[RMDB]
RNA sequence: GGGAACGACUCGAGUAGAGUCGAAAACUUUGUCGAUGUUCAACAGUGGGGUUAUGUAGGCAAUCUUGCUACUAAUCACGAUCGUUAUUGCUCUGUCCAUCAAGGAGCUCAUGUGGCUUCUAAUGAUAAAUCAAGGUGUUCGCACCUUGAAAAAGAAACAACAACAACAAC
Reactivity to DMS in 0.01 (KOAc 150mM, MgCl2 10mM, bicine 150mM(pH8.5), 24C), signal-to-noise 4, nucleotides 027 to 129: c010u020u020u050g020u020c000g040a060u020g000u050u010c020a020a100c060a020g050u000g000g000g000g000u030u000a000u040g020u010a070g000g020c000a070a020u030c170u030u020g000c080u000a050c020u000a000a080u000c060a100c000g000a050u040c030g000u000u060a040u050u010g020c050u020c020u040g000u030c040c050a060u020c050a090a060g030g010a030g040c060u030c070a080u060g000u060g000g000c050u000u000c040u030a080a040u040g000a060u050a040a060a070
Reactivity to 2A3 in 0.01 (KOAc 150mM, MgCl2 10mM, bicine 150mM(pH8.5), 24C), signal-to-noise 8, nucleotides 027 to 129: c010u080u080u200g060u060c060g050a050u040g020u100u030c010a030a020c000a090g030u020g030g030g030g000u030u010a090u300g040u040a030g060g090c020a020a130u050c100u090u150g020c010u030a010c010u060a010a040u100c060a020c100g080a110u100c040g060u070u040a060u110u040g000c000u000c010u020g070u030c030c010a020u020c000a030a040g000g000a010g010c000u000c010a080u270g090u130g060g000c000u000u000c020u060a100a130u090g070a030u030a070a100a020

Chemical mapping of a 170-nucleotide RNA with DMS and 2A3. 2A3 adducts were read by reverse transcription with SuperScript II with manganese. DMS (dimethyl sulfate) methylates the pairing face of unpaired adenines and cytosines. The data come from the RNA Mapping Database (RMDB), library 15KLIB.